Description: An RNA of 170 nucleotides, treated with DMS and 2A3 and read out base by base. The 2A3 profile rests on 3,560 reads. The data come from the RNA Mapping Database (RMDB), library 15KLIB. High 2A3 reactivity points to a flexible backbone, as in loops and unpaired stretches.
RNA sequence: GGGAACGACUCGAGUAGAGUCGAAAAGACGGUCCUUGGACCUCAGGGGGCCCAUGGAGCCGUGGGAAUCCCCAGACCUCCCUUCUCCACACUCCUUCCCCCCUGCGGGGCCCCCCCAUAAGAUGGCAGCCCUGGACGUUCGCGUCCAGGAAAAGAAACAACAACAACAAC
Reactivity to DMS in 0.01 (KOAc 150mM, MgCl2 10mM, bicine 150mM(pH8.5), 24C), signal-to-noise 2, nucleotides 027 to 129: g030a100c000g030g010u030c010c040u000u070g000g000a040c050c010u010c140a010g000g000g000g000g000c110c010c080a020u060g000g030a080g020c050c070g000u030g000g040g000a090a140u130c000c000c000c080a050g010a130c080c050u000c010c040c030u000u030c030u000c000c030a080c080a160c130u040c000c000u010u030c010c000c000c000c000c000u030g070c130g000g000g000g060c000c000c000c000c000c000c000a060u070a100a090g010a060u050g060g000c060a000g020c060
Reactivity to 2A3 in 0.01 (KOAc 150mM, MgCl2 10mM, bicine 150mM(pH8.5), 24C), signal-to-noise 2, nucleotides 027 to 129: g050a000c050g000g000u020c020c000u020u140g060g000a010c000c000u020c060a090g030g000g010g000g040c000c000c000a000u010g050g040a010g110c060c000g050u020g020g000g000a020a040u110c000c000c010c000a010g000a070c010c000u010c020c000c010u010u030c020u020c020c010a050c000a000c020u010c020c000u040u050c000c000c010c010c000c030u060g040c080g010g010g000g030c000c000c000c000c000c000c000a030u080a030a020g070a080u090g040g010c000a040g010c010